[RMDB]
RNA sequence: GGGAACGACUCGAGUAGAGUCGAAAAGAUAUGGAUGUUCUGCAUUUCCGAAGAACUCGGAAACGAGGGAGGAGGGUGCAGAGACAUCCUAAGUCAAAAGGUUGUCAGACUUCGGUCUGACAACCAAGGUACCAUCAUGGUUCGCCAUGAUGGUACCAAAAGAAACAACAACAACAAC
Reactivity to DMS in 0.01 (KOAc 150mM, MgCl2 10mM, bicine 150mM(pH8.5), 24C), signal-to-noise 2, nucleotides 027 to 126: g000a060u010a300u010g000g000a010u010g040u000u000c000u000g000c010a000u010u000u020c000c020g040a060a240g010a210a190c010u000c000g000g000a170a080a200c030g000a010g000g000g010a140g010g050a120g020g000g010u000g000c010a000g040a030g010a000c010a000u000c010c020u040a000a050g020u000c060a090a050a160a060g030g000u000u000g000u000c000a030g020a020c000u000u030c210g010g000u010c000u010g010a060c000a000a010c000c060a010a020
Reactivity to 2A3 in 0.01 (KOAc 150mM, MgCl2 10mM, bicine 150mM(pH8.5), 24C), signal-to-noise 1, nucleotides 027 to 126: g040a040u080a070u130g020g000a030u000g000u020u000c010u000g010c010a030u000u050u130c010c000g110a220a040g010a030a040c020u020c020g010g040a090a120a060c030g010a000g040g000g030a050g050g030a000g040g080g000u000g000c010a000g040a010g030a000c010a000u000c000c000u020a110a030g080u020c030a020a010a080a220g000g000u000u010g010u000c000a000g010a020c000u080u160c300g080g000u000c000u040g010a010c000a000a000c000c000a000a000